[RMDB]
Background
The record gives the reactivity of an RNA of 177 nucleotides to 2A3 and DMS. For 2A3, 6,135 sequencing reads were counted. The reactions ran in a buffer of 150 mM KOAc, 10 mM MgCl2 and 150 mM bicine (pH 8.5), at 24 C. It was measured as part of the RMDB library OK2TRN. Values cover nucleotides 27 to 126.

RNA sequence: GGGAACGACUCGAGUAGAGUCGAAAACAGACAGACUCUCACUGAGAGUGUGUGACUGAGAGAGUCAGUCUCUGUGACUCACACUCAGAGUGUGUCUCAGACAGAGUGUGUGACUGUCUCUGUCUGAGACGUUCAGUGCCUUCGGGCACUGAACGUCAAAAGAAACAACAACAACAAC
Reactivity to 2A3 in 0.01 (KOAc 150mM, MgCl2 10mM, bicine 150mM(pH8.5), 24C), signal-to-noise 5, nucleotides 027 to 126: c030a010g060a020c010a000g070a020c010u020c010u020c070a210c230u220g070a050g030a040g130u060g060u040g000u030g080a040c020u100g010a000g000a000g000a000g220u180c070a040g140u000c020u000c010u050g110u040g070a040c010u000c010a040c000a000c030u020c010a030g020a020g050u090g020u050g030u020c000u010c010a000g000a000c000a010g000a000g010u050g020u070g050u120g210a090c070u120g050u110c000u000c000u000g010u000c000u010g000a010
Reactivity to DMS in 0.01 (KOAc 150mM, MgCl2 10mM, bicine 150mM(pH8.5), 24C), signal-to-noise 6, nucleotides 027 to 126: c140a060g000a130c050a070g010a020c010u000c010u000c050a160c200u000g000a110g010a070g010u000g010u010g010u000g010a130c030u000g010a030g010a060g010a070g010u010c090a090g010u000c030u000c050u010g000u010g010a040c020u000c020a060c110a070c010u000c010a050g010a080g020u000g000u010g000u000c010u000c000a010g000a020c000a000g000a010g020u010g020u010g000u010g020a110c160u010g000u000c000u000c000u000g000u000c000u000g000a030